[RMDB]
RNA sequence: GGGAACGACUCGAGUAGAGUCGAAAAUGAAAAGCAGGCCUUAGAUUGCAAGGAUAUCAGUGUGGAGGAAUAUUUGAGGAUGCCAAGUGCACCAGAAGCACACGACAUACCUGAGGAUACAAACAGGUGUAUAUCUGGUCUUCGGACCAGAUAUACAAAAAGAAACAACAACAACAAC
Reactivity to DMS in 0.01 (KOAc 150mM, MgCl2 10mM, bicine 150mM(pH8.5), 24C), signal-to-noise 3, nucleotides 027 to 126: u000g000a050a050a090a200g010c040a040g020g010c030c070u010u000a070g020a080u010u000g030c060a080a110g010g000a100u020a070u020c030a070g020u000g050u000g000g010a150g010g000a080a050u000a060u000u000u000g010a080g010g000a060u000g020c050c020a080a180g000u000g000c050a060c100c100a090g010a100a100g000c010a050c040a120c080g000a020c100a070u000a050c020c000u000g000a090g030g010a080u000a060c190a070a020a070c130a040g020g010
Reactivity to 2A3 in 0.01 (KOAc 150mM, MgCl2 10mM, bicine 150mM(pH8.5), 24C), signal-to-noise 1, nucleotides 027 to 126: u110g050a020a000a060a020g020c050a010g040g080c020c000u120u110a090g010a200u080u120g080c030a030a000g040g000a010u030a030u170c080a040g040u050g050u030g030g060a080g020g100a180a000u090a120u110u100u120g020a000g140g010a010u050g000c050c000a170a090g050u070g030c020a010c000c030a030g100a140a010g030c010a020c000a000c050g000a000c020a050u090a070c000c000u010g030a040g140g010a080u090a210c050a010a130a010c010a010g090g040

Structure probing data (DMS and 2A3) for a 177-nucleotide construct. The DMS profile rests on 1,583 reads. 2A3 adducts were read by reverse transcription with SuperScript II with manganese. Values cover nucleotides 27 to 126.